[RMDB]
RNA sequence: GGGAACGACUCGAGUAGAGUCGAAAACGGGGCACUCUUCUCAGAAUCCAGCGAGAGGCGUGGAGAGAGGGCCGCGGUGCUCUGGAGUAGAGGCUCUGCCUUCGAAACACCAUCGAUCGUCCCUUCUCAUACACCGAUUGUUCGCAAUCGGUGUAUGAAAAGAAACAACAACAACAAC
Reactivity to 2A3 in 0.01 (KOAc 150mM, MgCl2 10mM, bicine 150mM(pH8.5), 24C), signal-to-noise 2, nucleotides 027 to 126: c020g000g010g060g040c010a030c040u000c020u060u040c020u010c000a070g160a130a130u130c120c020a030g100c070g070a130g030a020g140g050c040g020u050g110g030a050g010a020g000a010g000g010g030c040c010g000c050g010g000u010g010c010u020c010u010g030g010a020g020u030a010g000a000g000g000c030u040c210u300g030c010c000u120u120c000g020a000a010a000c000a030c110c000a040u020c000g030a210u030c000g020u020c000c010c020u050u020c050u030

The record gives the reactivity of an RNA of 177 nucleotides to 2A3. Values cover nucleotides 27 to 126. The 2A3 profile rests on 1,673 reads.